[RMDB]
RNA sequence: GGGAACGACUCGAGUAGAGUCGAAAAUGCGUCAAGUACCGCGGACAGUUCAGAGAACAGAAGUUUCAUGUCAGUGUGAACUUUGCUCAUAAAGGACCUGUGUCUGGAAGAUUCUAUGCCGAGGAAACGGCUGACUUCGCGGUAGACCAUCCUGACGGAAUGCUAGUCCAUUCGUGGACUAGCAUUCAAAAGAAACAACAACAACAAC
Reactivity to 2A3 in 0.01 (KOAc 150mM, MgCl2 10mM, bicine 150mM(pH8.5), 24C), signal-to-noise 3, nucleotides 027 to 156: u100g000c070g000u000c020a030a080g160u020a000c000c000g010c010g010g000a030c010a010g020u020u030c050a060g020a000g010a300a010c010a030g020a040a050g060u010u020u030c050a090u150g080u090c020a010g040u020g000u050g300a080a030c000u020u020u040g080c070u130c150a120u260a120a050a010g030g050a040c010c010u080g010u030g050u100c040u060g050g020a030a030g040a070u030u020c010u030a060u300g010c010c000g000a020g090g070a070a010a000c010g000g000c000u000g000a010c000u000u000c000g000c000g000g000u000a000g010a010c000c020a030u050c000c020u000g060a020c020g040
Reactivity to DMS in 0.01 (KOAc 150mM, MgCl2 10mM, bicine 150mM(pH8.5), 24C), signal-to-noise 1, nucleotides 027 to 156: u000g020c040g000u030c080a050a090g010u010a030c020c020g000c000g000g020a080c080a160g010u000u000c000a150g000a220g000a020a160c040a160g020a010a050g000u020u020u000c010a080u020g000u010c150a160g020u030g000u000g000a100a100c050u010u000u000g000c030u010c000a160u020a050a130a160g030g000a070c020c000u000g000u000g010u000c040u000g060g000a180a110g010a120u000u000c090u020a050u010g040c000c000g000a200g040g000a050a150a180c040g010g010c010u000g010a080c090u010u000c000g010c000g070g000u000a050g000a090c080c040a050u010c010c010u010g000a150c090g000